Background:
Structure probing data (2A3) for a 207-nucleotide construct. 2A3 adducts were read by reverse transcription with SuperScript II with manganese.
RNA sequence: GGGAACGACUCGAGUAGAGUCGAAAAUGCCAUCACAUACGCAAGACGCUAUGCUUUACAAGCUAUUGCUGGUAUUCCUGCUGAGGAUGAUGACGGUAAUGCAGCAAGCCAAAGUAAGCCAGCAAGUAAAGAUGUGCAAGCUAUUCGUGCAGCAAUCGUCGCGAAGGAGAUUCGUCUCCUUCGCGACAAAAGAAACAACAACAACAAC
Reactivity to 2A3 in 0.01 (KOAc 150mM, MgCl2 10mM, bicine 150mM(pH8.5), 24C), signal-to-noise 3, nucleotides 027 to 156: u080g030c020c020a060u090c030a010c020a080u130a080c070g070c010a090a090g100a020c070g000c030u050a060u230g010c020u060u110u080a070c050a070a080g000c030u090a080u060u040g000c020u030g010g000u060a150u070u120c030c040u070g000c040u050g060a020g100g020a080u110g040a060u070g060a060c060g020g100u190a120a000u200g010c040a000g000c000a030a090g010c020c020a080a000a000g030u050a100a010g020c010c000a000g000c040a050a000g020u050a020a060a000g060a040u040g030u050g090c050a060a040g000c010u030a070u200u130c120g020u080g090c060a060g000c070a070a120u140c100